Source: RMDB library RNAMAK, as collected in RNAgym. Structure probing data (2A3) for a 207-nucleotide construct. For 2A3, 1,230 sequencing reads were counted. Reactivities are rounded to 0.1 and cut off at 0 and 3. Reactivities are given for positions 27 through 156. Conditions: 150 mM KOAc, 10 mM MgCl2 and 150 mM bicine (pH 8.5), 24 C.

RNA sequence: GGGAACGACUCGAGUAGAGUCGAAAAGGGGUCCAAAGCUAGGAGUACAGCUUUGAUCUAUACUGAAGCCUCCACGGUAUAGGGAGCUGUGGUCCUUGGACCUUUGGACGGAGGCACCCAAAAGAUUCCUGUAGAACUUCGGUUCUACAGGAAUCAAGGUUUACCGUACGUUCGCGUACGGUAAACCAAAAGAAACAACAACAACAAC
Reactivity to 2A3 in 0.01 (KOAc 150mM, MgCl2 10mM, bicine 150mM(pH8.5), 24C), signal-to-noise 1, nucleotides 027 to 156: g010g030g080g010u040c020c000a000a020a000g080c030u050a020g070g000a300g300u000a010c000a000g000c000u300u170u030g010a010u010c000u000a000u000a000c000u020g060a130a030g000c000c000u000c000c000a000c000g000g000u000a000u000a010g000g000g000a000g000c000u000g000u020g040g150u030c000c000u010u070g200g090a300c020c000u010u000u000g010g010a010c010g010g000a000g000g000c010a030c010c000c000a030a190a040a010g010a000u000u030c010c000u010g000u000a000g000a010a000c000u040u050c300g060g000u000u010c000u000a010c010a000g000g000a000a000u000c000a000a000